[RMDB]
RNA sequence: GGGAACGACUCGAGUAGAGUCGAAAAUAGUCAAUGUCAUAAUCAGCUAAAAUAUCAUUGAUUGUGCUUUUACCGAUUUGGUUUGCUAACUUUCUGACGAAUUCCUCGUCGUUAUAGUACUCAUCAAAGUCACUCCCUGGUUCGCCAGGGAGUGACUAAAAGAAACAACAACAACAAC
Reactivity to 2A3 in 0.01 (KOAc 150mM, MgCl2 10mM, bicine 150mM(pH8.5), 24C), signal-to-noise 1, nucleotides 027 to 126: u100a000g090u090c000a010a010u000g050u120c110a040u050a100a040u300c080a000g140c260u300a050a050a080a110u260a040u100c070a120u070u000g000a030u000u030g000u020g040c080u160u000u000u220a070c000c040g070a230u040u000u250g080g020u000u000u000g000c000u000a000a120c000u030u080u050c040u050g030a000c040g070a060a050u210u240c030c100u030c050g000u000c000g000u000u030a000u030a120g070u100a100c010u020c000a080u000c000a090a040

Conditions: 150 mM KOAc, 10 mM MgCl2 and 150 mM bicine (pH 8.5), 24 C. Structure probing data (2A3) for a 177-nucleotide construct. For 2A3, 399 sequencing reads were counted. 2A3 adducts were read by reverse transcription with SuperScript II with manganese.